[RMDB]
RNA sequence: GGGAACGACUCGAGUAGAGUCGAAAAAAACCUGGAGGAAGUCCGACGAGAUCGCGGCUGGGGCUUAGGACCCCACUCCUGCGAGACGGGAGUAAUCCUAAACAGGGUUUUCACCCUUCCUUUAGUUUGAAUGUUAUAUGUUCGCAUAUAACAUUCAAAAAGAAACAACAACAACAAC
Reactivity to 2A3 in 0.01 (KOAc 150mM, MgCl2 10mM, bicine 150mM(pH8.5), 24C), signal-to-noise 2, nucleotides 027 to 126: a040a010a000c040c020u040g040g010a030g020g000a020a000g090u000c020c010g010a090c020g050a190g110a230u090c020g020c010g020g000c020u020g000g000g000g020c030u040u100a040g040g090a200c010c000c000c000a000c020u000c010c010u000g000c060g130a160g010a040c010g000g000g000a000g020u010a010a020u020c000c000u000a020a040a000c050a020g010g110g000u010u020u040u050c080a100c040c010c020u000u120c020c020u180u140u160a130g050u040u050
Reactivity to DMS in 0.01 (KOAc 150mM, MgCl2 10mM, bicine 150mM(pH8.5), 24C), signal-to-noise 2, nucleotides 027 to 126: a020a060a030c020c010u000g010g000a080g020g000a080a050g000u010c020c000g000a240c030g030a240g000a120u000c040g020c040g000g000c300u000g000g010g000g020c010u010u010a070g010g000a120c010c010c010c000a040c030u000c030c000u010g020c000g010a090g010a160c040g020g000g010a040g010u000a150a040u000c020c000u000a020a050a080c020a030g020g000g000u000u000u000u000c180a160c030c010c010u000u000c030c030u000u020u010a110g000u000u010
Chemical mapping of a 177-nucleotide RNA with 2A3 and DMS. The DMS profile rests on 1,107 reads. Source: RMDB library VIROID, as collected in RNAgym. The RNA was probed in 150 mM KOAc, 10 mM MgCl2 and 150 mM bicine (pH 8.5) at 24 C.